[RMDB]
An RNA of 177 nucleotides, treated with 2A3 and DMS and read out base by base.
DMS (dimethyl sulfate) methylates the pairing face of unpaired adenines and cytosines.
As a SHAPE reagent, 2A3 marks flexible, mostly unpaired nucleotides at the ribose 2'-OH.
2A3 adducts were read by reverse transcription with SuperScript II with manganese.
The data come from the RNA Mapping Database (RMDB), library TTRDES.
For 2A3, 4,690 sequencing reads were counted.
The DMS profile rests on 2,947 reads.
RNA sequence: GGGAACGACUCGAGUAGAGUCGAAAAGAUAUGGAGGCUUUGAUCACACAGCACAACGCGGUCGGAAACGACCGGCGUUAGCUGUGUGGGAGCCUCCUAAGUCAAAAUCCUGAGUUCGCUCAGGAAACCAUUCUUUUCAGUUCGCUGAAAAGAAUGGAAAAGAAACAACAACAACAAC
Reactivity to 2A3 in 0.01 (KOAc 150mM, MgCl2 10mM, bicine 150mM(pH8.5), 24C), signal-to-noise 2, nucleotides 027 to 126: g000a020u100a050u240g000g010a020g010g000c040u300u300u150g090a090u260c010a000c000a000c010a000g010c020a110c050a240a000c000g000c020g010g000u010c010g040g020a060a150a100c040g000a000c010c020g110g000c000g010u000u010a010g010c000u010g000u000g000u000g010g000g030a010g000c000c000u000c000c000u000a010a000g000u010c020a000a000a010a260u040c000c000u000g000a000g010u100u190c300g040c130u000c000a000g000g000a040a010a010
Reactivity to DMS in 0.01 (KOAc 150mM, MgCl2 10mM, bicine 150mM(pH8.5), 24C), signal-to-noise 3, nucleotides 027 to 126: g020a020u010a300u010g010g010a010g020g000c000u000u000u010g000a110u020c020a020c000a030c000a010g030c010a160c150a040a000c000g010c000g010g000u000c000g020g000a080a100a240c010g020a020c010c010g040g040c000g000u000u000a050g010c000u010g030u000g000u000g000g010g000a010g010c000c000u000c010c000u000a020a070g010u010c010a120a140a190a110u000c010c000u000g010a020g010u000u020c300g010c000u000c000a000g000g000a000a080a130